Source: RMDB library OK2TST, as collected in RNAgym. The record gives the reactivity of an RNA of 177 nucleotides to 2A3 and DMS. For DMS the reverse transcriptase was MarathonRT. The 2A3 profile rests on 2,521 reads. Reactivities are given for positions 27 through 126. The DMS profile rests on 2,422 reads.
RNA sequence: GGGAACGACUCGAGUAGAGUCGAAAAUCUUCGGGGAGUCGCUGCUGAACGACGCAGUCACCGUGGUGAGCAACGGAGCCACCGCUCCAGAGCGGGCGAGCCGUGGGAGGCCUGGGCCCCGUCUCACGCAGCAAAUACUGUUCGCAGUAUUUGCUGCAAAAGAAACAACAACAACAAC
Reactivity to 2A3 in 0.01 (KOAc 150mM, MgCl2 10mM, bicine 150mM(pH8.5), 24C), signal-to-noise 2, nucleotides 027 to 126: u000c010u190u180c060g000g000g010g020a050g040u080c030g030c030u090g030c010u030g040a200a060c060g060a020c050g020c040a020g030u070c090a020c080c030g040u070g070g000u030g010a040g000c040a040a070c010g010g000a010g000c000c040a120c050c010g000c000u020c000c020a040g020a010g130c040g010g020g000c050g040a090g040c000c020g000u080g040g020g010a060g000g040c040c060u110g110g040g010c000c000c000c000g110u010c000u010c000a020c040
Reactivity to DMS in 0.01 (KOAc 150mM, MgCl2 10mM, bicine 150mM(pH8.5), 24C), signal-to-noise 3, nucleotides 027 to 126: u010c020u000u010c060g010g010g000g000a090g020u000c060g010c010u010g000c010u010g010a100a100c170g020a100c190g020c080a060g010u020c050a180c060c040g000u030g010g020u000g000a060g030c030a070a060c030g000g000a040g000c000c020a170c170c060g010c000u010c020c080a060g000a230g020c020g000g010g000c250g010a110g010c010c010g000u000g000g020g020a090g000g000c100c010u010g000g010g000c000c030c020c010g010u000c000u000c020a030c050